[RMDB]
RNA sequence: GGGAACGACUCGAGUAGAGUCGAAAAACUUGAGGGGAAGGUAUGCUGGUAAAUUGCACUGAGAAUAGUUCCUAGCUGUCCCAUAUUUCAGCAUCUCCUGAAAUAGAUGUGUACUGUGAUGUACAAGUUCCAGGAUACAAUCAGUUCAUGAGUAUCACAUCAUUUAGGUGUUCGCACCUAAAUGAUGAAAAGAAACAACAACAACAAC
Reactivity to DMS in 0.01 (KOAc 150mM, MgCl2 10mM, bicine 150mM(pH8.5), 24C), signal-to-noise 4, nucleotides 027 to 156: a080c040u000u010g010a090g010g010g010g010a100a080g010g020u000a050u000g010c030u010g010g000u000a040a070a110u000u000g010c040a090c020u010g000a130g020a060a120u000a090g010u010u000c010c020u000a090g040c040u000g020u000c010c010c030a140u000a040u000u000u000c020a040g010c070a130u000c090u000c050c010u000g000a010a020a030u000a050g010a120u020g010u000g020u000a020c040u010g030u000g010a110u000g010u000a060c060a030a080g010u000u000c030c030a050g000g020a070u000a030c040a080a120u000c030a080g010u000u000c070a080u000g010a150g010u010a080u000c060a290
Reactivity to 2A3 in 0.01 (KOAc 150mM, MgCl2 10mM, bicine 150mM(pH8.5), 24C), signal-to-noise 7, nucleotides 027 to 156: a000c060u070u090g020a070g010g030g000g030a030a030g050g010u060a040u100g050c030u020g010g070u120a070a100a100u120u120g020c050a030c060u040g010a020g050a150a060u100a090g060u050u050c020c010u010a050g010c030u050g040u070c000c010c020a040u060a040u060u040u030c010a010g010c040a110u030c050u030c050c010u020g010a020a020a010u090a030g100a080u120g050u010g000u070a010c020u030g080u120g170a100u130g030u050a020c020a040a050g070u040u010c020c010a000g000g050a000u010a070c040a040a130u060c020a040g030u080u060c050a070u100g040a010g060u080a030u120c070a010